[RMDB]
RNA sequence: GGGAACGACUCGAGUAGAGUCGAAAAGAAACCACGAUCGGGCCAGAGGUCAUGAAUUCAACCAGACCAUCAAAGAACGGUUUUCCAUCGUGUUCAGCAUAAAAGCCACGUGCCUGUUCAACGGUCACCGACUAAAUAUGUUCGCAUAUUUAGUCGGAAAAGAAACAACAACAACAAC
Reactivity to 2A3 in 0.01 (KOAc 150mM, MgCl2 10mM, bicine 150mM(pH8.5), 24C), signal-to-noise 4, nucleotides 027 to 126: g010a020a060a010c040c010a020c040g010a050u070c060g000g030g020c030c020a050g020a060g070g000u030c020a130u100g090a080a150u200u160c050a030a050c050c020a000g010a000c020c000a090u110c080a080a150a080g040a030a020c020g020g000u000u010u160u070c030c010a010u030c030g000u000g050u050u110c030a010g010c000a030u130a140a170a020a000g040c010c010a030c050g040u070g030c000c010u040g010u080u060c050a080a030c050g000g010u010c020a020
Reactivity to DMS in 0.01 (KOAc 150mM, MgCl2 10mM, bicine 150mM(pH8.5), 24C), signal-to-noise 4, nucleotides 027 to 126: g010a070a080a110c190c010a040c120g010a040u000c120g040g010g000c050c080a120g000a080g000g010u000c020a100u000g020a070a120u010u010c190a070a100c140c050a080g000a070c020c010a090u000c130a080a080a090g000a040a110c090g000g000u010u010u010u010c060c070a050u000c060g020u010g020u000u000c080a100g000c060a070u010a060a070a040a100g000c070c020a030c050g020u000g000c050c020u000g010u000u010c060a080a100c080g000g010u000c080a160

Chemical mapping of a 177-nucleotide RNA with 2A3 and DMS. Conditions: 150 mM KOAc, 10 mM MgCl2 and 150 mM bicine (pH 8.5), 24 C. 2A3 adducts were read by reverse transcription with SuperScript II with manganese. For 2A3, 6,178 sequencing reads were counted.